[RMDB]
RNA sequence: GGGAACGACUCGAGUAGAGUCGAAAAUGCAUAGUCAGAGUCAUUCUUUGGAAUCAGACAGAUGUGUAUGGGCUGGAGUAUGUACAUAUUAGGGCCAUAACAAUGUAAGUGCCCGUCGAGUUCUUGACUGCUGCCUAGAUAGAGCUGAUUUAUUGAAGUUUUACGCAGUAUUCGUACUGCGUAAAACAAAAGAAACAACAACAACAAC
Reactivity to DMS in 0.01 (KOAc 150mM, MgCl2 10mM, bicine 150mM(pH8.5), 24C), signal-to-noise 4, nucleotides 027 to 156: u000g020c020a110u000a090g010u010c020a120g000a100g010u000c020a110u000u000c050u000u000u020g040g020a110a070u000c040a110g010a110c040a090g010a070u000g040u000g010u000a080u000g020g010g020c000u000g020g020a130g030u000a040u000g030u000a060c040a050u000a090u000u000a100g020g020g020c020c050a100u000a090a120c090a100a090u000g040u010a070a100g020u000g020c000c000c000g020u000c060g010a180g010u000u000c040u000u010g010a120c020u000g020c040u000g000c020c020u010a130g000a140u000a060g020a090g010c050u000g010a130u010u000u000a090u030u010g010a130a180
Reactivity to 2A3 in 0.01 (KOAc 150mM, MgCl2 10mM, bicine 150mM(pH8.5), 24C), signal-to-noise 7, nucleotides 027 to 156: u110g000c030a040u060a060g060u060c040a030g020a010g050u010c010a050u130u060c050u080u120u180g060g050a050a030u040c010a020g050a070c020a030g070a070u050g060u020g020u080a050u080g040g010g000c040u040g030g010a050g030u050a040u160g080u040a020c020a040u110a080u120u170a070g000g000g000c030c010a030u070a100a040c120a160a030u140g020u130a060a070g020u040g100c010c000c000g000u010c030g020a040g020u060u040c000u040u060g030a020c020u030g030c000u020g000c020c000u030a050g030a070u080a040g070a010g010c020u020g050a140u070u060u120a100u050u190g080a150a040